[RMDB]
RNA sequence: GGGAACGACUCGAGUAGAGUCGAAAAGUUGACUUGUUCGCAAGUCAACAAAGAAACUGGAAGGCGCGGCGAGCUGCAGCCGCAGAGAAUCAAAUGCAGCAAAAACCCGACGGUUCGCCGUCGGGAAGUGUGUUACAGUCUUCGGACUGUAACACACAAAAGAAACAACAACAACAAC
Reactivity to 2A3 in 0.01 (KOAc 150mM, MgCl2 10mM, bicine 150mM(pH8.5), 24C), signal-to-noise 1, nucleotides 027 to 126: g000u010u000g010a010c000u010u000g020u070u070c130g020c080a000a000g000u000c010a000a010c000a000a010a010g010a030a150a020c090u080g070g080a140a000g150g000c080g010c000g050g000c010g000a080g000c000u000g000c000a000g030c000c020g010c020a010g020a000g010a140a070u090c040a020a020a060u090g020c000a000g010c010a000a000a000a030a070c030c000c010g000a000c000g000g070u000u000c270g010c020c000g000u000c000g000g000g000a000a010
The record gives the reactivity of an RNA of 177 nucleotides to 2A3. The RNA was probed in 150 mM KOAc, 10 mM MgCl2 and 150 mM bicine (pH 8.5) at 24 C. The data come from the RNA Mapping Database (RMDB), library M2PK50.